Structure probing data (2A3 and DMS) for a 177-nucleotide construct. The RNA was probed in 150 mM KOAc, 10 mM MgCl2 and 150 mM bicine (pH 8.5) at 24 C. The 2A3 profile rests on 9,374 reads. For DMS the reverse transcriptase was MarathonRT. It was measured as part of the RMDB library OK2TRN.
[RMDB]
RNA sequence: GGGAACGACUCGAGUAGAGUCGAAAAGCGGUGCGCGGCGAGGAUCCACUAGAGAGGGCAGCACAGGCCGAGGAGCAGGAGCGUCAGCUGUCGUACUGGAAGCAACAGCUAGAUGGUAGCCAGCCGGCGACAGUUAGUAGUUCGCUACUAACUGUCGAAAAGAAACAACAACAACAAC
Reactivity to 2A3 in 0.01 (KOAc 150mM, MgCl2 10mM, bicine 150mM(pH8.5), 24C), signal-to-noise 3, nucleotides 027 to 126: g040c030g020g040u080g030c110g000c020g020g010c010g000a080g010g040a060u050c030c020a040c090u080a010g020a010g030a020g080g040g010c030a030g000c030a050c040a060g070g000c010c020g040a070g000g050a040g020c050a040g000g110a050g040c030g040u020c030a010g000c010u020g040u050c010g010u030a070c050u060g060g040a080a020g020c020a020a060c010a030g000c000u030a060g000a140u060g030g030u000a000g050c000c010a010g030c010c010g040g000
Reactivity to DMS in 0.01 (KOAc 150mM, MgCl2 10mM, bicine 150mM(pH8.5), 24C), signal-to-noise 6, nucleotides 027 to 126: g000c060g000g020u000g020c060g020c050g000g000c040g030a100g020g010a130u000c050c030a090c070u000a070g010a140g010a130g000g010g010c040a060g010c080a090c090a090g010g010c030c030g000a100g000g000a110g010c050a080g010g010a110g010c060g000u000c050a070g010c010u000g000u000c020g020u000a080c080u000g000g010a110a110g010c040a050a040c050a050g020c010u000a060g010a060u000g000g010u010a080g020c020c020a140g000c030c040g000g010